Chemical mapping of a 177-nucleotide RNA with DMS and 2A3. The 2A3 profile rests on 5,682 reads. DMS adducts were read by reverse transcription with MarathonRT.
RNA sequence: GGGAACGACUCGAGUAGAGUCGAAAACGGCGUGGGCGUUGUCGAAUACGCCUUCCUUUGUACCCAGACGCCGGACCAGGCGGGUUCCGACGCGGUUGCAAGGUCGGUGGACAACUACCUAGCAACGGUCUAUCCAAUCAUUCGUGAUUGGAUAGACAAAAGAAACAACAACAACAAC
Reactivity to DMS in 0.01 (KOAc 150mM, MgCl2 10mM, bicine 150mM(pH8.5), 24C), signal-to-noise 4, nucleotides 027 to 126: c090g020g010c180g020u000g010g000g040c300g000u000u000g010u000c170g010a160a110u000a300c050g000c000c000u000u000c020c010u000u020u000g020u010a080c070c010c010a150g020a190c000g010c020c020g020g000a040c040c030a240g010g010c210g010g010g020u000u000c010c020g000a020c020g010c070g000g010u000u000g000c010a100a020g010g010u000c120g020g020u010g010g020a080c110a070a000c020u000a160c010c000u000a200g030c010a060a040c100g010
Reactivity to 2A3 in 0.01 (KOAc 150mM, MgCl2 10mM, bicine 150mM(pH8.5), 24C), signal-to-noise 4, nucleotides 027 to 126: c020g060g020c050g040u140g000g000g020c020g010u010u020g020u050c040g120a140a100u230a170c040g000c000c000u010u020c010c000u100u090u100g030u010a020c020c000c010a080g100a120c020g000c000c000g000g000a020c020c010a100g230g260c170g160g080g000u160u060c010c010g020a020c000g020c000g080g010u000u020g000c000a010a010g020g010u030c030g010g000u040g040g010a010c000a010a010c010u050a060c020c000u030a040g000c030a070a050c080g050